[RMDB]
Background:
The record gives the reactivity of an RNA of 177 nucleotides to 2A3 and DMS. Conditions: 150 mM KOAc, 10 mM MgCl2 and 150 mM bicine (pH 8.5), 24 C. It was measured as part of the RMDB library RFMREP.

RNA sequence: GGGAACGACUCGAGUAGAGUCGAAAAGCUAUGCCGGGGCCACUGUGAACCCUGCCGCCUGCCGGAACACUCUUCGCUCCGGACCAGCUCAGCCUCUGAUAAGCUGGACUCGGCACGCCCGCAACAACUAAUAGACUAUGUUCGCAUAGUCUAUUAGAAAAGAAACAACAACAACAAC
Reactivity to 2A3 in 0.01 (KOAc 150mM, MgCl2 10mM, bicine 150mM(pH8.5), 24C), signal-to-noise 3, nucleotides 027 to 126: g000c020u070a030u200g010c020c000g050g000g000g000c020c010a020c040u040g020u030g090a040a060c020c000c030u030g030c020c020g030c020c020u040g050c020c000g000g030a030a000c030a030c030u180c060u180u200c110g020c020u010c000c000g020g020a040c020c020a010g000c010u020c040a020g030c040c020u080c020u060g080a090u040a180a050g020c070u010g010g000a030c020u000c010g020g020c000a030c020g050c030c000c010g000c040a030a080c010a030a020
Reactivity to DMS in 0.01 (KOAc 150mM, MgCl2 10mM, bicine 150mM(pH8.5), 24C), signal-to-noise 4, nucleotides 027 to 126: g020c140u010a090u020g020c000c020g000g000g010g000c020c050a060c100u000g020u000g010a100a150c060c060c040u000g020c040c070g010c120c030u000g010c020c050g000g000a060a070c070a120c160u010c130u000u000c180g010c020u000c010c020g000g000a100c080c070a070g010c020u010c040a060g000c060c040u000c070u010g000a070u000a050a080g000c120u000g020g000a070c010u000c030g010g000c020a070c120g010c000c010c020g000c100a040a050c080a080a190